[RMDB]
RNA sequence: GGGAACGACUCGAGUAGAGUCGAAAAAGCACAGUGACUAACAUACAAUAGGUGUGCAGUAAAUGUCUAGUGGAUGAAUACCCAGUGUGAACAUUAAUUGAGCACCACUAGCUGCCAAGCAGCCAAGAGCGUACUACAUGUUCGCAUGUAGUACGCUAAAAGAAACAACAACAACAAC
Reactivity to 2A3 in 0.01 (KOAc 150mM, MgCl2 10mM, bicine 150mM(pH8.5), 24C), signal-to-noise 3, nucleotides 027 to 126: a000g070c050a050c030a040g080u040g080a050c030u050a100a010c030a080u260a060c050a030a190u070a150g070g000u020g000u040g020c030a000g000u060a020a090a050u080g060u010c020u020a010g040u030g030g050a110u090g100a120a130u180a160c020c020c020a030g070u020g000u030g100a040a020c010a050u100u150a080a080u100u050g020a000g030c010a010c000c000a020c050u000a020g000c010u010g000c020c030a120a090g000c020a000g050c020c020a070a000g100
Reactivity to DMS in 0.01 (KOAc 150mM, MgCl2 10mM, bicine 150mM(pH8.5), 24C), signal-to-noise 3, nucleotides 027 to 126: a050g020c030a070c080a110g010u000g010a100c070u000a070a080c130a040u000a050c160a070a060u010a030g000g010u000g000u030g010c000a060g000u000a050a060a040u000g000u000c010u000a040g020u000g000g010a120u000g030a110a100u020a090c030c010c020a090g020u020g000u010g020a030a040c080a080u000u010a050a070u020u010g010a080g000c050a050c030c020a060c110u000a050g000c010u000g000c050c100a050a120g010c050a040g020c040c130a030a050g020
Description
Conditions: 150 mM KOAc, 10 mM MgCl2 and 150 mM bicine (pH 8.5), 24 C. This 177-nucleotide RNA was probed chemically with 2A3 and DMS. Source: RMDB library OK2TRN, as collected in RNAgym. 2A3 adducts were read by reverse transcription with SuperScript II with manganese.